[RMDB]
The record gives the reactivity of an RNA of 207 nucleotides to DMS.
Conditions: 150 mM KOAc, 10 mM MgCl2 and 150 mM bicine (pH 8.5), 24 C.

RNA sequence: GGGAACGACUCGAGUAGAGUCGAAAAGCCAUGAGUCGCAACGCAAAGCCGCGGCGAGUGGAGUUAGCGAGAAGAGACUAGGCUUUGGUUUCUUCAAGUGAAGCGGUCACCAAUCAGGUGUGGUAGUAGGAGCCUGCAUGGUUCGCCAUGCAGGCAAACAUUAUCAACGCUUCGGCGUUGAUAAUGUAAAAGAAACAACAACAACAAC
Reactivity to DMS in 0.01 (KOAc 150mM, MgCl2 10mM, bicine 150mM(pH8.5), 24C), signal-to-noise 1, nucleotides 027 to 156: g010c000c010a120u010g010a300g020u000c000g080c030a050a060c030g010c080a110a130a240g000c050c020g020c040g000g040c000g020a300g020u000g010g040a120g030u000u000a230g020c010g000a300g020a070a010g010a030g000a030c010u000a090g000g010c180u000u000u010g010g010u010u000u020c000u010u000c000a100a300g020u010g000a100a170g000c030g020g000u030c030a120c050c020a090a100u030c010a140g010g060u010g000u000g000g040u000a050g010u010a050g020g000a050g010c030c000u000g020c040a030u030g000g020u010u010c250g000c000c000a030u000g010c000a050g010g040c030a000a000